This 207-nucleotide RNA was probed chemically with 2A3.
RNA sequence: GGGAACGACUCGAGUAGAGUCGAAAAAAUCCAGCUGCAAAACUCUAGUUGCCAACGACGACAACUACGCUCUGGCCGCUUAAGGCCUAAGCCUCGAAACCGCUUGUGUCCAUGCUCGCGGUGUAGAGUCACUAUCAUGGAAUCGCGCUGGGUGGCUGUAACUGAUACGGUUCGCCGUAUCAGUUACAAAAGAAACAACAACAACAAC
Reactivity to 2A3 in 0.01 (KOAc 150mM, MgCl2 10mM, bicine 150mM(pH8.5), 24C), signal-to-noise 2, nucleotides 027 to 156: a010a010u000c010c010a000g030c010u270g010c020a070a070a030a070c070u060c050u190a010g000u000u000g070c060c000a290a080c130g140a020c090g040a050c070a010a050c010u160a100c060g010c010u050c040u060g000g000c020c000g060c050u220u180a140a090g000g020c000c000u000a000a000g030c000c000u010c010g050a040a000a000c000c000g040c010u100u040g120u020g020u160c030c010a050u060g000c010u160c260g010c020g010g000u000g000u000a000g000a010g000u010c000a030c060u120a040u290c010a030u040g000g000a020a000u130c090g000c000g000c050u000g010g010g000u010g040g000c040u020
Reactivities are given for positions 27 through 156. The reactions ran in a buffer of 150 mM KOAc, 10 mM MgCl2 and 150 mM bicine (pH 8.5), at 24 C.